Description
Chemical mapping of a 207-nucleotide RNA with 2A3 and DMS. The RNA was probed in 150 mM KOAc, 10 mM MgCl2 and 150 mM bicine (pH 8.5) at 24 C. In probing experiments dimethyl sulfate is read out at A N1 and C N3, which are open when not base-paired.
RNA sequence: GGGAACGACUCGAGUAGAGUCGAAAACCAAACGCGUUCGCGCGUUUGGAAAAAGCGUACUACUUGGUACUCCUGAUGACCAUAUGAGAACUCCCAAAUAGGAGACAUAUGCAAGGGAACCAAGUAUCGCAAAAAGUUUCCCCUUCGGGGGAAACAACAGGUAACGAUACUUCGGUAUCGUUACCUGAAAAGAAACAACAACAACAAC
Reactivity to 2A3 in 0.01 (KOAc 150mM, MgCl2 10mM, bicine 150mM(pH8.5), 24C), signal-to-noise 2, nucleotides 027 to 156: c010c000a010a000a000c010g040c010g000u050u100c150g000c000g000c010g090u010u020u020g010g060a060a050a000a050a050g020c030g020u090a090c030u000a000c000u020u000g000g020u110a240c050u010c000c000u160g050a300u130g020a040c030c060a010u000a000u000g130a170g050a180a070c010u050c010c080c100a100a260a170u280a050g000g000a020g050a040c010a000u000a000u010g010c010a120a210g030g000g000a060a010c010c010a000a000g010u010a020u070c000g000c000a030a030a020a030a030g010u010u000u000c040c000c000c020u020u180c230g050g020g000g000g000a010a000a000c000a010a010
Reactivity to DMS in 0.01 (KOAc 150mM, MgCl2 10mM, bicine 150mM(pH8.5), 24C), signal-to-noise 1, nucleotides 027 to 156: c000c000a000a000a040c010g020c020g040u000u010c210g040c010g080c000g000u000u000u000g000g020a020a030a050a110a170g000c060g030u000a090c200u000a000c000u020u000g020g000u000a140c190u000c010c010u000g050a150u010g000a270c300c010a000u000a000u000g000a050g000a200a210c000u010c000c000c020a110a210a210u000a160g000g010a000g000a200c010a000u000a000u000g020c010a120a150g020g000g010a080a050c010c000a010a000g000u000a010u000c020g030c000a040a010a040a130a040g000u000u000u000c000c000c000c020u010u020c270g050g040g030g030g030a000a000a000c000a010a160